[RMDB]
RNA sequence: GGGAACGACUCGAGUAGAGUCGAAAAUUUGCCGCUUGGAUGGCACGCGGCCCCUCGGGGUCGUGGGGUAUGGUUAUCAAGACAUACUCAACACAUAAUUUUUGUCGAGAGGAAGCAGUUGGCUACCGACCGUAGAGGUUUUCGAACCUCUACGGUCAAAAGAAACAACAACAACAAC
Reactivity to DMS in 0.01 (KOAc 150mM, MgCl2 10mM, bicine 150mM(pH8.5), 24C), signal-to-noise 1, nucleotides 027 to 126: u020u000u000g040c080c000g020c000u020u020g000g000a050u080g000g000c010a030c040g050c070g000g010c000c000c030c110u070c300g000g030g010g060u020c000g020u080g000g000g050g000u020a010u000g000g000u000u010a140u000c300a240a070g000a020c100a000u000a080c000u000c030a100a100c300a010c270a130u060a000a070u030u060u020u000u030g000u000c030g000a170g000a100g030g020a090a080g000c000a060g110u000u000g000g000c030u000a000c180c210
Reactivity to 2A3 in 0.01 (KOAc 150mM, MgCl2 10mM, bicine 150mM(pH8.5), 24C), signal-to-noise 3, nucleotides 027 to 126: u060u050u120g040c010c000g060c100u090u080g140g100a060u050g050g000c000a000c010g010c000g000g000c020c000c000c000u080c140g020g000g000g010u010c010g010u000g000g010g000g000u010a000u020g040g070u110u060a140u300c080a080a030g110a070c010a000u010a020c010u000c010a060a000c070a030c010a070u170a190a240u100u070u100u090u080g130u090c190g000a040g000a010g130g030a020a020g000c110a070g010u080u040g100g000c070u050a070c000c030